[RMDB]
RNA sequence: GGGAACGACUCGAGUAGAGUCGAAAAUCAAUCAUGUUCGCAUGAUUGAAAAGGUCAGGUGACCAAACCACGACACGCGUCGAAGCGACCGAGCCCGGAGCCAAAGUGCAAUCUUCGGAUUGCACAAACACCAUGUAUGGUUCGCCAUACAUGGUGUAAAAGAAACAACAACAACAAC
Reactivity to DMS in 0.01 (KOAc 150mM, MgCl2 10mM, bicine 150mM(pH8.5), 24C), signal-to-noise 6, nucleotides 027 to 126: u010c000a010a000u000c000a000u000g010u000u020c210g020c000a020u000g000a010u010u000g000a000a050a080a100g000g000u000c010a120g010g010u010g010a080c100c090a040a100a140c030c020a180c040g000a040c030a080c190g010c110g000u000c040g000a100a130g000c080g010a050c030c010g010a100g020c020c010c030g000g000a110g030c060c090a050a060a110g010u000g010c000a010a010u000c000u000u010c180g030g000a010u000u000g000c000a000c000a030a060
Reactivity to 2A3 in 0.01 (KOAc 150mM, MgCl2 10mM, bicine 150mM(pH8.5), 24C), signal-to-noise 4, nucleotides 027 to 126: u010c000a000a000u000c000a010u010g030u070u080c160g010c110a010u000g010a010u010u010g010a030a030a020a030g030g010u020c030a030g010g190u070g150a090c040c000a060a110a010c040c020a050c040g040a020c020a020c110g130c060g060u050c030g060a080a020g060c040g060a040c020c010g010a020g040c010c020c000g000g060a040g020c040c030a100a130a020g000u000g000c000a000a000u000c000u020u030c120g090g000a000u000u000g000c000a000c000a010a010
Annotation
This 177-nucleotide RNA was probed chemically with DMS and 2A3. For 2A3 the reverse transcriptase was SuperScript II with manganese. Values cover nucleotides 27 to 126. For 2A3, 9,555 sequencing reads were counted. The data come from the RNA Mapping Database (RMDB), library M2PK50. For DMS, 6,381 sequencing reads were counted.